Structure probing data (DMS) for a 177-nucleotide construct. For DMS, 915 sequencing reads were counted. It was measured as part of the RMDB library OK2TRN. The reactions ran in a buffer of 150 mM KOAc, 10 mM MgCl2 and 150 mM bicine (pH 8.5), at 24 C.
[RMDB]
RNA sequence: GGGAACGACUCGAGUAGAGUCGAAAAGAUAUGCAUACACUCAGCACACCCUGUCUGCAUUGUUGCUGAUUUCAAAAUUUGGACGAAAAUCACCCAAUCCUCUAGACUUGGUGGCUUGGGAAGAUCGAAGUCCAUUUUGGUUCGCCAAAAUGGACUUAAAAGAAACAACAACAACAAC
Reactivity to DMS in 0.01 (KOAc 150mM, MgCl2 10mM, bicine 150mM(pH8.5), 24C), signal-to-noise 1, nucleotides 027 to 126: g000a120u010a020u000g020c040a070u000a080c130a140c080u010c150a080g040c080a070c080a110c040c070c010u000g000u000c060u000g040c110a070u000u010g000u010u030g030c020u000g000a020u000u000u010c060a060a050a090a090u010u010u020g010g030a130c020g000a030a040a180a050u000c010a030c010c030c010a020a010u000c010c030u000c020u000a070g000a100c240u020u000g040g020u000g020g000c180u040u000g010g000g020a080a040g010a050u000c070g000